[RMDB]
RNA sequence: GGGAACGACUCGAGUAGAGUCGAAAAGGCAUGCUAUUGAGCUGGGGUUGAUGCGUCAUGGUUUGAGUAAGUCAGAAGCGCAAUGUGGGGCUGAUGCUGCUAUGGAAAACUUUGCCCUAUGGCGUAGCUUACAGCCCACAUUCGUGUGGGCUGUAAGAAAAGAAACAACAACAACAAC
Reactivity to DMS in 0.01 (KOAc 150mM, MgCl2 10mM, bicine 150mM(pH8.5), 24C), signal-to-noise 3, nucleotides 027 to 126: g000g020c070a040u000g010c030u010a110u000u000g010a080g010c020u000g000g010g010g000u000u010g000a090u000g020c060g000u000c030a140u010g020g000u010u000u000g000a060g010u000a060a060g010u010c040a080g000a100a130g000c050g000c060a030a070u000g010u000g000g010g000g020c050u010g010a080u000g020c040u000g000c040u000a080u000g010g000a060a060a080a100c070u010u000u000g000c050c020c110u000a020u000g010g010c040g010u000a060g020
Reactivity to 2A3 in 0.01 (KOAc 150mM, MgCl2 10mM, bicine 150mM(pH8.5), 24C), signal-to-noise 2, nucleotides 027 to 126: g080g020c060a040u090g000c000u090a060u170u160g050a030g090c020u040g010g010g020g000u030u070g070a150u100g020c030g050u060c020a050u030g070g080u080u070u080g090a080g010u160a060a000g010u020c030a020g030a150a020g030c010g000c060a050a020u140g010u100g010g030g030g000c010u010g010a030u110g020c030u000g000c020u060a130u080g070g000a040a030a000a000c040u130u080u150g060c020c020c010u010a070u080g060g000c050g060u080a030g020
Chemical mapping of a 177-nucleotide RNA with DMS and 2A3. The reactions ran in a buffer of 150 mM KOAc, 10 mM MgCl2 and 150 mM bicine (pH 8.5), at 24 C. Source: RMDB library OK2TST, as collected in RNAgym. DMS (dimethyl sulfate) methylates the pairing face of unpaired adenines and cytosines.